[RMDB]
RNA sequence: GGGAACGACUCGAGUAGAGUCGAAAAAUAUCACAUUCAUGUUGGUUAUAGCAAGAACUGCUCAUGGAUUACGGUCGAACAACUAAUUAGGCAAUUGCAGACUCUGUUAACAUCAUCCAAAUAUGGACGAAAGUAGCGAUUUCGAUCGCUACUUUCGAAAAGAAACAACAACAACAAC
Reactivity to 2A3 in 0.01 (KOAc 150mM, MgCl2 10mM, bicine 150mM(pH8.5), 24C), signal-to-noise 3, nucleotides 027 to 126: a000u120a030u070c000a010c030a120u110u040c040a040u020g100u080u070g090g040u040u100a120u150a120g060c090a100a020g060a090a080c030u020g000c000u000c050a060u070g030g000a050u060u090a040c080g080g000u050c070g020a110a060c010a060a000c090u090a000a100u140u110a050g150g000c060a090a110u000u060g000c040a000g000a120c000u000c030u170g000u110u090a040a060c030a070u060c000a000u000c020c000a000a100a000u230a180u080g030g030a010
Reactivity to DMS in 0.01 (KOAc 150mM, MgCl2 10mM, bicine 150mM(pH8.5), 24C), signal-to-noise 2, nucleotides 027 to 126: a150u020a120u040c070a110c280a100u000u050c010a020u000g000u000u000g000g000u020u000a090u030a010g050c110a010a140g000a090a100c110u020g000c070u000c030a060u000g020g000a050u000u000a000c220g000g010u060c070g000a010a030c250a080a050c170u000a080a010u000u000a090g000g010c000a100a080u000u000g070c160a080g000a050c090u020c020u000g050u010u010a130a090c170a030u010c000a110u000c000c000a070a090a000u030a050u000g000g000a250